[RMDB]
RNA sequence: GGGAACGACUCGAGUAGAGUCGAAAAUUUAAGACCGUAGAUGUCUCUGUCACGAUACGAGUAAGUGACUCUCGUGUACUACUGACGAAUGAGACAGAGACAUUUAUGCUCAGUGUCAGUCAAGGAAAUCUUGGCAAUCGUUCGCGAUUGCCAAGAUAAAAGAAACAACAACAACAAC
Reactivity to 2A3 in 0.01 (KOAc 150mM, MgCl2 10mM, bicine 150mM(pH8.5), 24C), signal-to-noise 1, nucleotides 027 to 126: u050u020u010a130a010g010a060c020c000g020u010a000g020a030u010g000u010c000u000c000u000g020u010c010a000c050g070a010u040a080c000g020a000g000u050a250a020g020u040g190a050c000u000c010u020c040g160u120g030u050a030c020u010a030c010u060g160a060c080g090a150a100u260g010a090g010a030c010a000g000a000g000a000c000a000u010u000u000a000u000g020c030u000c060a030g020u030g080u140c030a060g000u000c070a030a020g080g040a110a170
Reactivity to DMS in 0.01 (KOAc 150mM, MgCl2 10mM, bicine 150mM(pH8.5), 24C), signal-to-noise 2, nucleotides 027 to 126: u020u010u000a090a110g010a060c090c020g020u000a000g000a000u000g000u000c000u000c000u000g010u000c010a110c060g000a120u010a050c010g000a060g000u000a020a110g000u000g000a070c110u000c170u000c120g000u010g010u000a050c030u010a030c070u000g020a100c060g010a100a060u020g000a110g020a030c000a010g000a000g000a010c000a000u000u000u000a000u000g040c130u000c050a060g010u010g000u010c060a090g010u000c100a120a060g000g010a100a090